The record gives the reactivity of an RNA of 207 nucleotides to DMS and 2A3.
The data come from the RNA Mapping Database (RMDB), library OK3TST.
For 2A3, 706 sequencing reads were counted.
For 2A3 the reverse transcriptase was SuperScript II with manganese.
Reactivities are rounded to 0.1 and cut off at 0 and 3.
For DMS the reverse transcriptase was MarathonRT.
[RMDB]
RNA sequence: GGGAACGACUCGAGUAGAGUCGAAAAAUGUGUAUAACUUGUACAUACUUAAGAAAUCCAGCCAUUUUCAUCUUGCUAUUGGGUGCUAAUCCCAUGAAUAUAAACUAGAGACUUCUUCAGAUGACCCUGGCAAAUCUCUCGUCUAGGACAAAGCCUAUAUGAUUUAAAUCUUCGGAUUUAAAUCAUAAAAAGAAACAACAACAACAAC
Reactivity to DMS in 0.01 (KOAc 150mM, MgCl2 10mM, bicine 150mM(pH8.5), 24C), signal-to-noise 1, nucleotides 027 to 156: a080u000g040u040g000u010a040u000a090a210c080u020u020g020u000a040c020a030u010a050c070u010u010a110a190g000a110a110a100u010c030c040a100g000c040c010a090u000u000u000u000c090a110u000c070u000u020g030c020u000a090u010u020g010g010g010u010g000c050u000a060a140u010c000c010c020a110u000g010a030a070u000a110u040a060a070a140c040u000a040g030a090g000a090c040u000u000c010u000u000c110a130g010a100u030g000a080c040c030c020u020g030g000c140a050a070a130u000c000u000c040u000c040g020u000c020u010a040g000g040a110c080a060a060a150g020c040c010u010a200
Reactivity to 2A3 in 0.01 (KOAc 150mM, MgCl2 10mM, bicine 150mM(pH8.5), 24C), signal-to-noise 2, nucleotides 027 to 156: a000u040g000u010g000u020a070u000a170a120c070u060u150g020u010a000c020a020u020a040c020u110u070a060a060g010a060a140a030u050c020c070a000g000c010c000a040u010u030u110u140c040a040u020c020u090u060g070c020u090a040u130u090g000g030g000u060g160c130u140a100a100u080c000c020c000a010u040g000a030a000u150a010u070a120a100a000c070u040a050g020a040g030a150c040u130u080c010u080u020c100a030g030a200u040g020a080c020c000c010u020g000g000c000a050a110a140u020c020u000c000u010c020g080u020c110u100a000g000g030a050c020a060a080a050g080c040c050u140a070